This 177-nucleotide RNA was probed chemically with DMS and 2A3. The RNA was probed in 150 mM KOAc, 10 mM MgCl2 and 150 mM bicine (pH 8.5) at 24 C. For 2A3 the reverse transcriptase was SuperScript II with manganese. The data come from the RNA Mapping Database (RMDB), library OK2TRN. Reactivities are rounded to 0.1 and cut off at 0 and 3.
RNA sequence: GGGAACGACUCGAGUAGAGUCGAAAACGAUGAGGGGAGAAGAGAAGUGGACAGGUGGGUCGAAGACGCCCGCCCCAUGGCGCACGCCCGUCGCUUGUUUGCAUGCGGGGGUCAGACCCCCUUACCGCAUGACCGGUACUUUCGAGUACCGGUCAUGAAAAGAAACAACAACAACAAC
Reactivity to DMS in 0.01 (KOAc 150mM, MgCl2 10mM, bicine 150mM(pH8.5), 24C), signal-to-noise 2, nucleotides 027 to 126: c080g020a070u000g000a070g020g000g000g010a080g010a070a100g000a100g010a110a040g040u000g010g000a090c160a070g000g010u010g020g010g020u000c030g010a180a110g000a130c160g000c000c010c020g000c010c090c130c030a070u010g000g000c040g020c140a050c150g000c040c070c080g000u000c050g000c010u000u010g010u010u000u000g030c120a130u010g000c010g010g000g000g010g000u010c040a140g000a220c030c020c000c010c010u020u010a080c040c060g010
Reactivity to 2A3 in 0.01 (KOAc 150mM, MgCl2 10mM, bicine 150mM(pH8.5), 24C), signal-to-noise 1, nucleotides 027 to 126: c080g050a120u190g020a100g010g000g030g040a050g030a130a000g070a030g010a120a000g070u060g010g010a010c080a080g000g000u130g020g030g000u030c020g070a100a030g080a020c030g180c080c000c010g020c000c030c000c010a060u000g010g010c020g010c000a030c030g060c040c050c020g060u140c010g020c010u060u070g030u270u270u150g080c100a050u120g020c050g000g000g030g040g000u000c000a010g030a070c000c040c000c000c000u000u060a040c030c040g000